This 177-nucleotide RNA was probed chemically with DMS and 2A3.
DMS adducts were read by reverse transcription with MarathonRT.
Source: RMDB library OK1LIB, as collected in RNAgym.
The RNA was probed in 150 mM KOAc, 10 mM MgCl2 and 150 mM bicine (pH 8.5) at 24 C.
As a SHAPE reagent, 2A3 marks flexible, mostly unpaired nucleotides at the ribose 2'-OH.
RNA sequence: GGGAACGACUCGAGUAGAGUCGAAAACGGGAUUUAGCUGCGGCAGGAACGAAUACGGGCUGCCGCAAUAGGGACACCAGCCCUCUGAAGCUCCCUUGGUCUCCGAGUCGGACCGGCCGACGGGACGUAGGUACGUGCUAUUCGUAGCACGUACCUAAAAAGAAACAACAACAACAAC
Reactivity to DMS in 0.01 (KOAc 150mM, MgCl2 10mM, bicine 150mM(pH8.5), 24C), signal-to-noise 3, nucleotides 027 to 126: c190g000g000g010a120u000u010u000a030g000c300u000g040c000g000g000c000a020g030g030a120a110c040g020a290a090u040a230c050g000g000g090c000u000g000c030c000g000c010a040a010u010a020g000g000g000a110c160a120c120c100a160g010c010c020c010u000c130u000g000a100a120g020c080u000c020c020c010u010u020g000g010u010c040u050c010c010g010a140g020u000c000g000g020a150c110c150g000g000c000c030g000a080c050g000g000g010a050c140g000
Reactivity to 2A3 in 0.01 (KOAc 150mM, MgCl2 10mM, bicine 150mM(pH8.5), 24C), signal-to-noise 3, nucleotides 027 to 126: c040g010g050g020a030u090u120u180a040g020c030u050g030c000g020g000c000a000g040g060a140a080c010g020a160a110u200a220c080g010g110g010c010u000g000c000c030g000c000a010a010u010a000g000g000g020a050c030a070c130c110a060g050c020c020c010u050c040u070g090a120a050g000c010u010c000c000c000u030u050g090g010u030c050u000c010c000g000a050g090u030c020g000g030a080c050c000g020g080c000c000g000a060c070g010g010g000a020c020g010